[RMDB]
RNA sequence: GGGAACGACUCGAGUAGAGUCGAAAACCGAUCCGAGGGGCCCGGUGGCCUGAUCUGGAGGGCACUCCGGGCCGUAAGGAAGAAAAGCACCCAGAGGGAGGAAGCCACACAGGGGUUUGCAGAGAAACCAAUAGACUUACUUCGGUAAGUCUAUUGGAAAAGAAACAACAACAACAAC
Reactivity to DMS in 0.01 (KOAc 150mM, MgCl2 10mM, bicine 150mM(pH8.5), 24C), signal-to-noise 1, nucleotides 027 to 126: c000c000g020a070u000c020c000g020a300g010g000g030g040c000c000c020g040g030u000g020g010c000c000u010g000a140u010c100u020g000g020a300g000g000g020c040a110c020u000c010c000g000g000g000c000c000g000u000a030a160g020g020a080a160g020a050a050a150a150g030c030a110c020c010c050a080g030a100g000g000g000a020g020g020a120a130g030c000c010a060c030a100c100a060g000g000g010g000u000u000u000g020c030a080g020a160g010a110a080a090
The data come from the RNA Mapping Database (RMDB), library 15KREP. The record gives the reactivity of an RNA of 177 nucleotides to DMS. Reactivities are rounded to 0.1 and cut off at 0 and 3. Conditions: 150 mM KOAc, 10 mM MgCl2 and 150 mM bicine (pH 8.5), 24 C.